[RMDB]
RNA sequence: GGGAACGACUCGAGUAGAGUCGAAAAUCGCUCUUUCGAGAGCGACAAUUUCCUAAGUCUCCACCAUGUCUCUAGCGUGGGCGAGGAUCGUUCGGAAACGAACGGGAGCCUCGGGCAUGGGAUGGAGAUAUGGAUAAAGGUCACAUUCGUGUGACAAGAAACGGUUACAGUUCGCUGUAACCGUUUCAAAAGAAACAACAACAACAAC
Reactivity to 2A3 in 0.01 (KOAc 150mM, MgCl2 10mM, bicine 150mM(pH8.5), 24C), signal-to-noise 2, nucleotides 027 to 156: u030c010g020c000u020c020u060u150u260c300g190a020g000a000g000c000g000a000c010a070a190u050u070u000c000c000u000a070a070g010u000c030u000c050c000a030c050c040a000u050g010u020c010u000c100u300a120g110c050g190u300g030g000g000c030g020a280g000g000a020u020c010g000u010u000c020g000g100a060a080a080c000g000a000a000c000g010g000g010a020g020c000c010u010c000g000g000g000c000a010u010g010g060g060a030u130g000g010a000g010a000u020a010u040g050g000a040u120a110a170a070g090g000u000c020a000c000a030u100u220c240g120u120g010u010g020a010c060a030a070